[RMDB]
Conditions: 150 mM KOAc, 10 mM MgCl2 and 150 mM bicine (pH 8.5), 24 C. This 177-nucleotide RNA was probed chemically with 2A3 and DMS. 2A3 adducts were read by reverse transcription with SuperScript II with manganese. For DMS, 5,868 sequencing reads were counted. DMS adducts were read by reverse transcription with MarathonRT. It was measured as part of the RMDB library OK1LIB.
RNA sequence: GGGAACGACUCGAGUAGAGUCGAAAAUAAUCAAGAUGAAUCGUUUUUAGUUUGCUUGCUUACCUUAUGGGCCAGCAUGAGAUCUACUUGAAUCUUUUUAUGUAGGCAGAGAGCGACGGAAUUUAAAACUAUCGCACUAUUUCGAUAGUGCGAUAGUAAAAGAAACAACAACAACAAC
Reactivity to 2A3 in 0.01 (KOAc 150mM, MgCl2 10mM, bicine 150mM(pH8.5), 24C), signal-to-noise 5, nucleotides 027 to 126: u130a010a040u100c060a030a020g030a110u080g070a030a160u070c070g040u030u060u060u060u050a150g040u030u060u090g010c000u020u020g000c000u040u070a120c030c020u160u080a120u200g010g000g000c000c020a010g000c000a020u040g070a030g000a060u000c010u030a070c010u070u050g020a050a040u080c030u000u140u000u010u020a100u130g070u050a000g050g000c030a010g030a000g010a010g050c010g020a020c020g020g120a080a060u090u160u160a080a060a000
Reactivity to DMS in 0.01 (KOAc 150mM, MgCl2 10mM, bicine 150mM(pH8.5), 24C), signal-to-noise 3, nucleotides 027 to 126: u030a070a080u040c090a060a070g010a080u030g020a150a070u010c030g030u010u000u000u010u030a070g010u030u010u010g050c010u000u010g020c030u020u000a090c070c080u020u070a070u050g000g000g000c010c090a040g000c020a020u000g000a010g020a030u010c030u030a070c040u020u010g020a080a070u010c030u010u010u020u020u020a050u000g000u030a040g010g000c030a140g010a050g000a030g000c050g000a060c080g000g020a040a080u020u010u030a090a090a050